[RMDB]
RNA sequence: GGGAACGACUCGAGUAGAGUCGAAAAGACUAAUAAUAAGCCUGUAUUUGACUUAGUGAGCCGUUCAGUGAUGAGAACUGACAAUCGUUACCACUCGGCAAGUCAGGAAUACUUAGACAUUAGAGAAGAUAUUGUGGUAUUUCGAUAUUACGAUAUCAAAAGAAACAACAACAACAAC
Reactivity to DMS in 0.01 (KOAc 150mM, MgCl2 10mM, bicine 150mM(pH8.5), 24C), signal-to-noise 9, nucleotides 027 to 126: g000a140c020u000a010a020u010a070a230u010a030a030g020c000c010u000g000u050a030u010u000u000g000a110c010u010u000a020g010u000g010a070g020c150c090g000u030u010c020a020g010u010g010a250u040g010a180g010a130a030c020u000g010a030c300a090a070u030c160g010u010u020a110c080c010a030c020u010c090g000g000c020a020a010g010u000c010a010g000g010a180a030u020a230c030u000u000a020g000a130c210a030u000u000a020g010a140g000a110a070
Reactivity to 2A3 in 0.01 (KOAc 150mM, MgCl2 10mM, bicine 150mM(pH8.5), 24C), signal-to-noise 9, nucleotides 027 to 126: g050a020c010u010a010a030u050a040a020u020a030a000g040c010c000u050g140u140a120u010u020u020g170a270c000u000u010a010g000u010g040a020g040c030c010g030u040u010c010a010g010u020g080a240u190g090a100g070a120a020c000u010g020a010c070a040a120u120c030g020u020u080a040c020c000a000c000u000c000g000g000c000a000a000g000u000c000a000g010g000a020a030u100a090c000u010u010a010g010a030c040a090u010u030a020g020a000g030a210a010
This 177-nucleotide RNA was probed chemically with DMS and 2A3. For 2A3 the reverse transcriptase was SuperScript II with manganese. It was measured as part of the RMDB library OK1LIB. DMS adducts were read by reverse transcription with MarathonRT. Conditions: 150 mM KOAc, 10 mM MgCl2 and 150 mM bicine (pH 8.5), 24 C.